[RMDB]
RNA sequence: GGGAACGACUCGAGUAGAGUCGAAAAUGAAGCAAAUCCAUAAUUGCCAAUGAUGAGCAAUUCGCUAUUGCCGCCUAAAAACGGUUAGCCGGGGCUGCUAGAGCCUUGUUACCAAAGAUAUCCGGCGUUACGGCAUGAUGGUUCGCCAUCAUGCCAACUCUGAAAGGAACUUCGGUUCCUUUCAGAGAAAAGAAACAACAACAACAAC
Reactivity to 2A3 in 0.01 (KOAc 150mM, MgCl2 10mM, bicine 150mM(pH8.5), 24C), signal-to-noise 3, nucleotides 027 to 156: u090g020a060a010g020c040a030a030a090u060c030c020a050u140a150a050u070u030g000c000c030a070a160u270g100a140u070g020a140g010c000a000a040u100u080c050g010c070u070a050u110u180g010c000c000g000c000c010u060a020a040a050a010a000c020g030g000u040u080a020g000c010c010g000g000g000g030c010u030g000c090u170a060g040a000g210c010c010u020u030g070u060u080a090c040c040a020a090a060g130a040u060a050u070c030c000g020g000c010g030u120u110a040c080g000g000c040a000u000g010a000u000g000g000u040u030c140g020c020c000a010u000c000a010u000g000c000c000a000a020
Reactivity to DMS in 0.01 (KOAc 150mM, MgCl2 10mM, bicine 150mM(pH8.5), 24C), signal-to-noise 2, nucleotides 027 to 156: u000g010a140a140g040c020a120a100a140u010c040c040a080u000a030a070u000u000g010c000c010a120a200u000g020a180u000g010a120g040c010a020a020u000u000c010g000c020u020a090u000u000g020c020c010g030c020c030u000a090a040a100a170a030c010g030g030u000u000a080g010c000c050g050g020g000g000c060u000g010c050u000a080g010a030g030c020c040u000u000g010u010u000a120c060c030a040a120a120g000a130u000a120u000c080c020g040g020c010g030u000u000a080c080g010g040c010a010u000g000a030u010g030g020u010u010c300g020c050c020a020u000c000a000u000g000c010c010a010a010
Overview: Chemical mapping of a 207-nucleotide RNA with 2A3 and DMS. The data come from the RNA Mapping Database (RMDB), library M2RFPK. The reactions ran in a buffer of 150 mM KOAc, 10 mM MgCl2 and 150 mM bicine (pH 8.5), at 24 C.